[RMDB]
RNA sequence: GGGAACGACUCGAGUAGAGUCGAAAAGCUACACUCUUCGGAGUGUAGCAAACCCGAUGAAGCGGCACUUUCGGAGCUUCAUACAUCUAAGAGUGCAAAUAAAAAUCGGCGACUUCGGUCGCCGAAACAAUCUACUAACCUUCGGGUUAGUAGAUUGAAAAGAAACAACAACAACAAC
Reactivity to 2A3 in 0.01 (KOAc 150mM, MgCl2 10mM, bicine 150mM(pH8.5), 24C), signal-to-noise 3, nucleotides 027 to 126: g000c000u010a010c000a000c000u020c010u030u060c170g120g000a000g000u000g020u000a000g000c000a000a000a000c020c010c000g020a080u070g010a030a020g040c070g060g020c080a020c030u100u130u150c250g080g070a040g020c030u030u030c010a000u050a060c060a070u100c080u170a090a030g040a010g080u040g010c050a030a100a070u160a090a130a050a030a030u030c000g010g000c010g010a020c020u030u050c170g090g000u000c000g010c000c000g000a000a000a000
Reactivity to DMS in 0.01 (KOAc 150mM, MgCl2 10mM, bicine 150mM(pH8.5), 24C), signal-to-noise 2, nucleotides 027 to 126: g000c000u000a010c000a010c000u000c000u000u010c130g020g010a030g000u000g000u000a020g030c000a000a050a080c000c000c000g040a060u010g020a020a050g020c030g010g000c010a030c010u000u000u000c110g000g020a240g040c040u010u010c030a050u000a070c170a080u000c130u000a120a070g000a030g040u010g000c010a110a040a110u000a060a060a060a110a130u000c000g000g050c000g010a020c000u000u000c210g050g010u000c000g040c000c000g000a000a010a100